RNA sequence: GGGAACGACUCGAGUAGAGUCGAAAAGUGAGGAUGCAAUGGAAUCGUAAGUGUAAAGGGCCUAGUAUAGUGGGUAGUAAUUUAUUUUACUCCUUUUUUUCCACUUUAAAUGAAGAGUGGCUAAACUUCAACUUUUGGGACAUUGGUCUCUACCUGACUAUCAGCGUGGUUUCGACCACGCUGAUAGAAAAGAAACAACAACAACAAC
Reactivity to 2A3 in 0.01 (KOAc 150mM, MgCl2 10mM, bicine 150mM(pH8.5), 24C), signal-to-noise 1, nucleotides 027 to 156: g060u010g010a040g020g000a010u010g020c000a010a130u040g020g050a020a010u020c010g030u050a020a080g010u040g010u030a050a150a070g010g010g030c020c010u050a050g000u060a020u090a220g040u080g000g000g030u010a000g000u030a050a020u010u170u170a140u110u030u000u000a010c000u030c020c010u110u120u000u000u050u120u000c000c040a000c000u070u230u100a150a200a140u170g110a020a050g010a000g030u030g010g020c010u040a090a040a080c030u030u050c030a070a090c050u070u040u100u060g010g000g000a000c010a080u010u220g100g020u000c000u020c000u010a000c000c000u010g090a030